[RMDB]
RNA sequence: GGGAACGACUCGAGUAGAGUCGAAAACACAAUCGAUUGGAUUGAGUCUUCUGCUUGGGAUGGCCGUGAUGGUAUAGUUGUCGCUGGUGAUAUUGCUCUCUAUGCCAAGGGCAAUGCUCGUCCUACAAUCACCCAUUUUAUUCGUAAAAUGGGUGAUAAAAGAAACAACAACAACAAC
Reactivity to DMS in 0.01 (KOAc 150mM, MgCl2 10mM, bicine 150mM(pH8.5), 24C), signal-to-noise 9, nucleotides 027 to 126: c130a160c140a060a040u000c030g010a160u010u010g010g000a080u000u000g000a070g010u000c030u000u000c020u000g010c040u000u010g010g000g010a070u000g010g010c020c030g030u000g010a100u000g010g000u000a050u000a050g010u000u000g010u000c120g010c040u000g010g020u010g010a100u010a070u010u000g000c010u000c020u000c060u000a060u010g010c070c080a090a080g010g010g010c010a030a040u000g010c120u000c050g010u000c010c010u000a070c220a110
Reactivity to 2A3 in 0.01 (KOAc 150mM, MgCl2 10mM, bicine 150mM(pH8.5), 24C), signal-to-noise 9, nucleotides 027 to 126: c070a000c020a010a080u050c030g280a210u070u160g110g000a020u010u040g030a010g030u000c020u050u010c010u050g070c030u040u070g050g000g030a050u050g090g000c010c020g070u060g050a070u060g010g020u070a050u050a110g100u080u080g080u060c080g010c070u060g030g080u090g050a040u050a040u160u100g000c010u010c000u000c020u050a040u120g030c010c020a020a020g030g000g000c000a010a040u050g010c030u010c030g010u020c010c000u030a030c040a020